RNA sequence: GGGAACGACUCGAGUAGAGUCGAAAACGGCCUGGCUUCGGCCAGGCCGAAAGAUGCAUUUUACGCCAUGAAAUCCCGGAACAUUGGCCCGGAAGCCUGAGAAAAGAGUACUGUUCGCAGUACUCAAGAUAUACAAUUACUUCGGUAAUUGUAUAUCAAAAGAAACAACAACAACAAC
Reactivity to 2A3 in 0.01 (KOAc 150mM, MgCl2 10mM, bicine 150mM(pH8.5), 24C), signal-to-noise 3, nucleotides 027 to 126: c010g010g040c000c020u020g010g030c030u070u060c160g070g010c000c020a000g030g020c010c000g000a000a000a000g020a020u080g000c020a010u020u050u060u200a090c050g010c000c030a040u070g070a090a090a060u040c000c010c000g030g020a080a020c070a120u060u140g010g000c010c020c020g080g040a060a040g020c010c030u100g020a080g100a060a130a030a030g000a000g010u010a000c000u030g050u050u060c200g000c080a000g000u010a020c000u000c000a000a000
Reactivity to DMS in 0.01 (KOAc 150mM, MgCl2 10mM, bicine 150mM(pH8.5), 24C), signal-to-noise 4, nucleotides 027 to 126: c030g010g020c000c010u000g010g020c010u000u010c180g020g020c010c000a010g010g000c000c000g000a010a030a040g000a080u000g010c060a080u000u000u000u010a090c100g010c020c030a050u000g010a070a100a100u000c010c010c020g020g000a060a080c070a110u000u000g020g010c020c040c070g010g000a110a110g010c030c020u000g000a150g000a090a090a120a120g000a020g010u000a010c010u000g010u000u010c180g020c000a010g010u000a000c000u000c010a020a050